[RMDB]
This 177-nucleotide RNA was probed chemically with DMS and 2A3.
The data come from the RNA Mapping Database (RMDB), library OK1LIB.
The 2A3 profile rests on 3,947 reads.

RNA sequence: GGGAACGACUCGAGUAGAGUCGAAAAGAAUCGUACUGGCCGUGGAGUUGCUGGUAGGCACUCGAGUAGGCCGCCUCGAGUUCCUCGAAGUAGUAGACGUACUUCUCCCCGAACUUCUCGGGAUCGACGACUUUUAUGCAUUCGUGCAUAAAAGUCGAAAAGAAACAACAACAACAAC
Reactivity to DMS in 0.01 (KOAc 150mM, MgCl2 10mM, bicine 150mM(pH8.5), 24C), signal-to-noise 2, nucleotides 027 to 126: g000a070a130u020c020g020u010a010c050u010g020g010c050c020g000u040g000g010a100g040u010u020g050c020u000g000g020u070a090g040g010c010a030c040u000c000g000a080g000u000a200g000g000c010c000g000c260c100u020c030g010a030g000u010u010c010c020u010c120g010a030a030g070u000a040g020u010a110g010a130c130g000u000a120c030u010u020c010u020c040c000c020c020g020a030a100c090u010u000c050u000c030g020g000g000a110u030c090g000a200
Reactivity to 2A3 in 0.01 (KOAc 150mM, MgCl2 10mM, bicine 150mM(pH8.5), 24C), signal-to-noise 6, nucleotides 027 to 126: g070a020a050u120c030g010u090a040c060u080g040g000c020c010g120u220g050g020a030g000u200u120g040c020u060g020g290u140a150g060g030c020a000c010u010c000g050a020g060u120a090g070g000c000c000g000c000c010u000c000g010a000g000u030u050c020c010u000c090g030a040a000g000u020a010g010u030a010g030a120c110g050u020a030c010u010u020c020u070c000c000c010c010g000a050a040c090u180u010c050u060c060g000g050g100a140u130c030g060a070